[RMDB]
Structure probing data (2A3 and DMS) for a 177-nucleotide construct. 2A3 adducts were read by reverse transcription with SuperScript II with manganese. High 2A3 reactivity points to a flexible backbone, as in loops and unpaired stretches. The 2A3 profile rests on 803 reads. Reactivities are given for positions 27 through 126. Conditions: 150 mM KOAc, 10 mM MgCl2 and 150 mM bicine (pH 8.5), 24 C.

RNA sequence: GGGAACGACUCGAGUAGAGUCGAAAAGCAGAGCUGUUGACGCUGAUUGAGGCGGCUUUCGGCGAAAUAUCAUCAAUACAUUUGCCCACCAAAACUAAAUUUAAAUUCGGAGCCAUGAUGAAAUCCGUAGGGAAUAUGCAUUCGUGCAUAUUCCCUAAAAAGAAACAACAACAACAAC
Reactivity to 2A3 in 0.01 (KOAc 150mM, MgCl2 10mM, bicine 150mM(pH8.5), 24C), signal-to-noise 1, nucleotides 027 to 126: g000c040a020g010a020g020c020u090g000u060u040g060a070c020g000c000u020g020a140u110u140g070a110g040g090c030g020g000c000u040u060u120c000g040g000c030g120a070a060a090u180a040u060c020a000u020c000a050a100u060a160c070a140u040u070u100g040c020c030c030a010c020c020a040a140a060a120c080u170a070a030a240u220u250u090a070a100a050u120u070c000g020g030a000g060c030c020a070u050g010a060u000g000a030a110a000u040c020c000g000
Reactivity to DMS in 0.01 (KOAc 150mM, MgCl2 10mM, bicine 150mM(pH8.5), 24C), signal-to-noise 2, nucleotides 027 to 126: g010c080a060g030a150g010c040u010g020u010u010g010a210c030g030c010u000g000a160u000u000g020a110g000g000c040g020g020c070u000u000u000c030g010g010c020g000a100a080a190u000a100u000c050a060u000c030a010a060u020a070c130a170u000u000u010g010c010c000c010a070c140c110a050a050a090a110c190u010a020a020a140u010u000u010a030a050a120u000u010c030g040g000a060g010c040c160a060u010g000a060u000g000a040a100a110u000c000c070g020